[RMDB]
RNA sequence: GGGAACGACUCGAGUAGAGUCGAAAACUCAUUUCCCCAUUAAACAUUCUGAGAACAUCUGCACCGGUUUCCAAGGCUUCUCCCUCACUAAUUGCUUUGAUUAUUGUGUGAAGUUAAGAACUGGCACCAUAUGAUCAGCUUUCGAGCUGAUCAUAUGAAAAGAAACAACAACAACAAC
Reactivity to DMS in 0.01 (KOAc 150mM, MgCl2 10mM, bicine 150mM(pH8.5), 24C), signal-to-noise 7, nucleotides 027 to 126: c050u020c060a160u030u020u010c010c010c000c110a130u020u010a070a090a110c100a070u010u010c050u010g000a100g000a100a100c090a040u010c030u010g000c050a050c030c020g000g010u010u010u000c040c060a080a120g010g010c050u010u000c040u000c030c020c010u010c040a050c060u000a040a070u010u000g000c070u010u010u020g010a100u010u000a070u010u000g010u020g010u000g000a090a080g010u000u010a060a100g000a090a090c030u000g010g010c060a040c100
Reactivity to 2A3 in 0.01 (KOAc 150mM, MgCl2 10mM, bicine 150mM(pH8.5), 24C), signal-to-noise 9, nucleotides 027 to 126: c010u020c020a050u020u030u010c010c010c010c020a080u130u200a120a090a030c040a050u140u040c050u110g050a040g030a130a030c030a090u030c040u080g010c030a020c020c020g040g030u040u090u040c050c030a070a070g050g000c010u040u000c010u030c010c010c000u030c010a050c020u060a070a070u070u070g050c050u120u070u100g080a060u050u180a090u120u070g030u000g020u020g080a070a040g030u040u070a110a030g030a080a030c010u010g040g000c010a010c020